This 177-nucleotide RNA was probed chemically with DMS and 2A3. For 2A3, 7,643 sequencing reads were counted.

RNA sequence: GGGAACGACUCGAGUAGAGUCGAAAAUGAUCCAUGUAUGAUCGUACCGAUCACAUGGGAUCCGAUCAGUGCACGUCUAGAGUACGAUCCAUGCAUGCAGCUGUCAUGGCUCACGCACGAUCCUAGCCACUCCACCUAGUUUCGACUAGGUGGAGUGAAAAGAAACAACAACAACAAC
Reactivity to DMS in 0.01 (KOAc 150mM, MgCl2 10mM, bicine 150mM(pH8.5), 24C), signal-to-noise 5, nucleotides 027 to 126: u010g000a030u000c020c010a010u000g010u000a120u020g010a000u000c000g020u010a130c270c100g000a010u000c010a050c020a010u010g010g020g000a020u000c020c200g020a060u000c060a100g030u000g000c060a080c070g000u020c090u000a090g000a120g020u000a060c080g000a030u000c020c060a060u010g010c010a060u000g010c220a040g010c060u000g000u010c250a030u020g000g020c030u010c020a040c090g000c020a020c110g000a100u000c010c030u000a090g020c170
Reactivity to 2A3 in 0.01 (KOAc 150mM, MgCl2 10mM, bicine 150mM(pH8.5), 24C), signal-to-noise 5, nucleotides 027 to 126: u170g010a020u020c000c030a010u020g030u020a190u130g020a010u010c020g060u160a240c100c250g000a000u000c010a010c010a050u060g110g060g040a030u000c020c040g010a060u040c050a070g050u020g040c010a020c090g060u040c080u160a100g000a060g170u120a050c060g010a010u020c020c020a020u040g010c000a010u070g030c050a040g010c050u050g070u260c020a040u070g000g010c020u020c020a030c080g000c000a000c030g000a010u000c000c020u010a040g080c020